An RNA of 177 nucleotides, treated with DMS and read out base by base. For DMS, 1,522 sequencing reads were counted. Values cover nucleotides 27 to 126. The data come from the RNA Mapping Database (RMDB), library M2PK90. Conditions: 150 mM KOAc, 10 mM MgCl2 and 150 mM bicine (pH 8.5), 24 C.
RNA sequence: GGGAACGACUCGAGUAGAGUCGAAAAUUAUAUAGCGUGUGCAAGACGCUGUACUUGCCAUGAUCUGGAACUUUAGUGCUGAGGUCCGAGUUCCAGAUCAUCAUUUCGGACCUCAGCACUAAUAUAAACGUCUGAAAUGAUUCGUCAUUUCAGACGUAAAAGAAACAACAACAACAAC
Reactivity to DMS in 0.01 (KOAc 150mM, MgCl2 10mM, bicine 150mM(pH8.5), 24C), signal-to-noise 2, nucleotides 027 to 126: u010u010a110u000a110u020a030g010c020g000u000g020u010g030c060a040a050g020a050c040g020c190u010g010u010a040c060u000u010g000c010c010a040u020g010a120u040c060u000g020g040a110a150c210u000u000u000a000g010u000g000c000u010g010a010g010g030u000c010c010g000a020g020u010u000c090c060a090g010a080u000c080a030u000c080a050u020u010u000c000g000g000a020c000c020u000c000a000g000c000a010c000u000a000a000u000a070u000a060a150